[RMDB]
RNA sequence: GGGAACGACUCGAGUAGAGUCGAAAAGCUGUGAGUAAUCGCUCCUCUGGAGAAGAAAACCAGCGUUGCUUCUCGCCUCUUCCUCGUCUUCUGUCCCGCUAGUCGAGCGGACAACCCGAGCACCGCCGAAGGCCUUUUUUCUUUUAUAGCAGCUUGGCCAUGCAAGUAAGUUCGCUUACUUGCAUGGAAAAGAAACAACAACAACAAC
Reactivity to DMS in 0.01 (KOAc 150mM, MgCl2 10mM, bicine 150mM(pH8.5), 24C), signal-to-noise 1, nucleotides 027 to 156: g030c000u000g030u000g020a090g020u000a080a280u010c010g000c000u040c010c010u020c140u000g010g000a080g030a130a110g000a080a080a180a130c040c080a080g010c090g020u000u010g030c010u000u000c020u000c030g000c080c030u000c030u010u010c220c040u000c010g010u000c010u000u020c000u030g010u000c040c010c020g020c120u000a140g010u000c080g000a080g020c010g060g000a090c060a110a110c080c030c030g020a110g020c030a140c050c050g000c090c030g000a080a100g070g030c020c000u010u030u030u030u000u000c020u070u000u010u020a090u000a180g000c030a140g000c040u000u000g000g010
Reactivity to 2A3 in 0.01 (KOAc 150mM, MgCl2 10mM, bicine 150mM(pH8.5), 24C), signal-to-noise 5, nucleotides 027 to 156: g000c020u030g030u070g100a040g040u080a130a120u130c080g010c020u020c010c010u230c190u240g020g020a100g010a280a100g030a040a160a040a050c020c000a020g030c060g250u300u100g010c020u050u020c020u010c030g000c000c010u000c000u050u040c030c010u010c010g050u020c050u120u020c020u100g070u030c020c010c010g000c030u030a050g070u080c040g050a030g030c010g020g010a060c050a060a070c040c030c010g010a010g000c000a010c010c010g000c000c010g040a020a020g040g020c030c020u060u100u070u060u140u120c080u110u210u080u100a210u120a090g090c110a010g020c010u020u020g010g000
About this RNA: An RNA of 207 nucleotides, treated with DMS and 2A3 and read out base by base. Source: RMDB library VIROID, as collected in RNAgym. Reactivities are rounded to 0.1 and cut off at 0 and 3. The reactions ran in a buffer of 150 mM KOAc, 10 mM MgCl2 and 150 mM bicine (pH 8.5), at 24 C. DMS adducts were read by reverse transcription with MarathonRT. The 2A3 profile rests on 3,014 reads. Reactivities are given for positions 27 through 156.